[RMDB]
This 177-nucleotide RNA was probed chemically with DMS and 2A3. DMS adducts were read by reverse transcription with MarathonRT. The DMS profile rests on 3,868 reads. High 2A3 reactivity points to a flexible backbone, as in loops and unpaired stretches. Source: RMDB library OK1LIB, as collected in RNAgym. 2A3 adducts were read by reverse transcription with SuperScript II with manganese. The reactions ran in a buffer of 150 mM KOAc, 10 mM MgCl2 and 150 mM bicine (pH 8.5), at 24 C.

RNA sequence: GGGAACGACUCGAGUAGAGUCGAAAACGUCAGAGGACGAAGUCGGUCCAUCUGCGGUAAAAGACCGACAUAGAGUUCGAAGCAGAACGCACAACCGCAGAAACACGAUUGGAGUGUGAAUGAGAGACGAUUACUCACUGUUCGCAGUGAGUAAUCGAAAAGAAACAACAACAACAAC
Reactivity to DMS in 0.01 (KOAc 150mM, MgCl2 10mM, bicine 150mM(pH8.5), 24C), signal-to-noise 3, nucleotides 027 to 126: c050g010u000c020a130g000a300g020g000a010c050g050a070a080g000u000c020g020g000u020c030c130a180u010c010u000g060c010g000g000u010a030a080a140a060g010a010c020c020g020a050c030a110u010a070g000a160g000u000u010c040g040a240a200g000c220a130g020a070a020c030g000c180a060c190a090a020c040c000g000c000a040g010a110a180a050c100a050c090g010a180u010u000g000g000a180g000u000g000u010g000a020a030u030g000a090g030a120g000a170
Reactivity to 2A3 in 0.01 (KOAc 150mM, MgCl2 10mM, bicine 150mM(pH8.5), 24C), signal-to-noise 4, nucleotides 027 to 126: c020g020u040c050a050g040a100g290g110a060c060g020a090a000g060u020c010g000g000u000c020c000a070u040c000u000g000c000g000g000u030a020a050a040a000g010a000c000c000g000a000c000a060u180a040g120a000g010u050u030c030g010a100a020g080c030a030g000a030a010c040g070c040a050c020a100a050c000c000g000c020a020g020a020a080a020c120a020c080g130a140u130u170g050g010a060g020u030g010u040g040a050a100u160g010a050g010a000g010a070